[RMDB]
RNA sequence: GGGAACGACUCGAGUAGAGUCGAAAAGAUAUGGAUUGCCACUCUCUGAUGACCUCGGAAACGAGCAAGGAGGUGGACAAUCCUAAGUCAAAACUUAAUACCACGCCUUCGGGCGUGGUAUUAAGAAGACAUAUGUCCUGUUCGCAGGACAUAUGUCAAAAGAAACAACAACAACAAC
Reactivity to 2A3 in 0.01 (KOAc 150mM, MgCl2 10mM, bicine 150mM(pH8.5), 24C), signal-to-noise 2, nucleotides 027 to 126: g030a020u070a050u160g000g000a010u000u020g000c010c010a010c000u300c000u000c000u080g140a250u160g050a300c000c020u000c000g000g040a020a100a070c020g010a020g000c000a050a160g010g020a000g000g010u000g020g000a020c010a000a010u010c000c000u010a090a010g060u020c030a000a000a110a180c010u020u020a000a000u000a000c010c000a000c020g020c000c010u060u180c300g020g000g010c000g010u000g000g000u000a000u010u000a010a000g030a000a000
Reactivity to DMS in 0.01 (KOAc 150mM, MgCl2 10mM, bicine 150mM(pH8.5), 24C), signal-to-noise 3, nucleotides 027 to 126: g010a050u000a300u000g000g000a000u000u000g000c000c000a000c000u010c010u000c010u010g010a100u020g020a100c300c000u000c000g000g000a110a140a150c010g010a010g000c000a040a160g000g010a030g000g010u000g000g000a060c010a010a010u010c000c000u020a020a070g010u000c040a050a080a060a120c000u010u000a010a010u000a010c000c000a020c000g030c000c000u000u020c190g020g000g060c000g020u000g000g010u000a010u000u000a000a000g000a110a070

Structure probing data (2A3 and DMS) for a 177-nucleotide construct. Conditions: 150 mM KOAc, 10 mM MgCl2 and 150 mM bicine (pH 8.5), 24 C. For DMS, 2,082 sequencing reads were counted. Reactivities are given for positions 27 through 126. It was measured as part of the RMDB library TTRDEL.